[RMDB]
RNA sequence: GGGAACGACUCGAGUAGAGUCGAAAACUCUUGUUAGGUGAAAGUUGAUGGUCGCCGUGUCAGUCCAUGCCUUUGAAAACAGUUCUAUGUAGUAGGGAGUCGAGAACCUAUGACAGUUAGAACUUGCUAUGCCUUGGACUCUUCGGAGUCCAAGGAAACUGAACAGAUCCUUCGGGAUCUGUUCAGUAAAAGAAACAACAACAACAAC
Reactivity to DMS in 0.01 (KOAc 150mM, MgCl2 10mM, bicine 150mM(pH8.5), 24C), signal-to-noise 1, nucleotides 027 to 156: c010u000c060u000u000g070u010u000a050g030g020u010g030a080a050a120g050u000u030g010a160u000g030g020u000c030g060c020c000g040u010g000u010c020a080g010u010c010c130a090u010g010c060c000u000u000u000g010a080a030a040a040c030a040g010u000u000c000u000a070u010g030u000a030g020u000a010g000g000g000a140g030u000c240g000a300g000a070a240c000c030u000a020u010g020a040c000a100g000u000u000a020g000a020a030c020u000u000g030c030u000a070u000g000c000c000u010u000g020g000a030c010u000c000u000u000c250g060g000a030g000u010c000c000a000a010g030g010a010a010